The record gives the reactivity of an RNA of 177 nucleotides to DMS. The DMS profile rests on 3,193 reads. The RNA was probed in 150 mM KOAc, 10 mM MgCl2 and 150 mM bicine (pH 8.5) at 24 C.

RNA sequence: GGGAACGACUCGAGUAGAGUCGAAAAGAUAUGGAAUCGCAUGGGAGCUUGGAUUUACAUAAAGUCACUACCCUCGGAAACGAGGGUAGUGACUUUAUGUUGUCAGCUCCAUGCCGAUUCCUAAGUCGAUACUCUUACGGUUCGCCGUAAGAGUAUCAAAAGAAACAACAACAACAAC
Reactivity to DMS in 0.01 (KOAc 150mM, MgCl2 10mM, bicine 150mM(pH8.5), 24C), signal-to-noise 1, nucleotides 027 to 126: g010a140u010a300u010g020g000a010a010u000c000g010c010a010u000g010g030g010a020g020c010u020u020g010g010a020u000u030u000a010c000a020u010a000a010a000g000u000c000a010c010u000a000c000c000c000u010c000g020g010a120a070a250c020g010a020g020g000g010u010a000g000u000g000a000c000u000u000u000a000u000g000u000u000g000u000c020a030g000c000u000c000c000a000u000g000c080c070g010a010u000u000c000c000u000a020a100g010u010c100